[RMDB]
RNA sequence: GGGAACGACUCGAGUAGAGUCGAAAAGAUAUGGAUAUGAACUGUGUAUAUGAGAAGCGAUAAGCCUACAUUCGGAAACGAAUGAGGCUUUUGACGCUUCCAUAUACACAGUUCAUAUCCUAAGUCACUAAGCUUUACUCUUCGGAGUAAAGCUUAGAAAAGAAACAACAACAACAAC
Reactivity to DMS in 0.01 (KOAc 150mM, MgCl2 10mM, bicine 150mM(pH8.5), 24C), signal-to-noise 2, nucleotides 027 to 126: g010a030u010a300u000g010g010a010u010a000u000g000a000a010c000u000g020u000g000u000a010u000a000u000g000a250g010a000a000g020c000g030a170u000a030a010g000c000c000u000a120c000a020u000u000c000g020g000a170a080a200c010g010a000a000u020g020a100g000g000c010u000u020u000u000g010a190c040g020c000u000u010c010c000a010u000a010u000a000c000a000c000a000g010u010u000c000a000u000a000u000c000c000u000a020a050g000u000c040a300